[RMDB]
RNA sequence: GGGAACGACUCGAGUAGAGUCGAAAAAGUAUUUACAUAUCUUGGGGAGAUUUAGAGUAUAAACGCUAAGAUCUUUGGUAUUUAAGUGUCAACAUCGAUUUAUUCAUUUAUUGCUGAGCUGACUGUAACGAAGACGGGAUUUCGAUCCCGUCUUCGUAAAAGAAACAACAACAACAAC
Reactivity to 2A3 in 0.01 (KOAc 150mM, MgCl2 10mM, bicine 150mM(pH8.5), 24C), signal-to-noise 1, nucleotides 027 to 126: a000g220u140a000u070u040u130a130c000a000u230a230u100c000u050u050g180g000g110g000a100g000a000u040u040u040a230g000a000g130u150a140u080a090a230a000c020g000c070u000a050a050g000a000u000c000u010u070u020g010g010u000a040u000u160u000a110a040g000u000g000u000c010a000a000c000a270u090c000g060a070u000u190u300a150u230u080c000a000u000u000u110a290u030u030g000c000u020g000a000g000c000u000g190a140c000u000g070u020a030